[RMDB]
RNA sequence: GGGAACGACUCGAGUAGAGUCGAAAACGGUGCCAGUAUACCUCAAAUGGUUGUCGUACCUCUCAUGGUUCCGUUACGCCAACGAGGGUCUGCUGAUUAACCAAUGGGCGGACGUGGAGCCGGGCGAUCGUGCGUUUUGAUUCGUCAAAACGCACGAAAAAGAAACAACAACAACAAC
Reactivity to 2A3 in 0.01 (KOAc 150mM, MgCl2 10mM, bicine 150mM(pH8.5), 24C), signal-to-noise 1, nucleotides 027 to 126: c030g000g020u030g020c010c000a010g030u070a040u070a150c010c030u010c080a070a090a240u100g010g000u060u240g030u030c030g000u000a030c000c020u110c010u000c070a130u180g000g000u080u000c050c030g060u170u070a080c030g000c000c010a040a020c070g020a020g070g060g000u030c020u000g050c030u040g030a080u110u080a100a150c040c100a030a070u080g040g040g000c040g030g030a050c000g100u110g030g010a000g000c000c000g000g000g000c050g020a080
Reactivity to DMS in 0.01 (KOAc 150mM, MgCl2 10mM, bicine 150mM(pH8.5), 24C), signal-to-noise 2, nucleotides 027 to 126: c050g010g040u000g020c020c000a050g010u000a080u000a150c030c010u000c090a110a250a080u000g020g010u000u000g020u000c050g020u010a080c090c030u010c110u000c070a030u000g020g000u000u010c080c070g040u000u000a120c070g040c010c020a050a090c300g000a060g000g020g000u000c040u000g000c030u010g020a030u000u000a060a110c080c130a040a190u020g020g010g030c060g000g000a050c090g010u000g000g000a140g000c020c010g010g000g010c170g010a130

An RNA of 177 nucleotides, treated with 2A3 and DMS and read out base by base. 2A3 adducts were read by reverse transcription with SuperScript II with manganese. The reactions ran in a buffer of 150 mM KOAc, 10 mM MgCl2 and 150 mM bicine (pH 8.5), at 24 C. It was measured as part of the RMDB library OK2TST. For DMS, 1,062 sequencing reads were counted.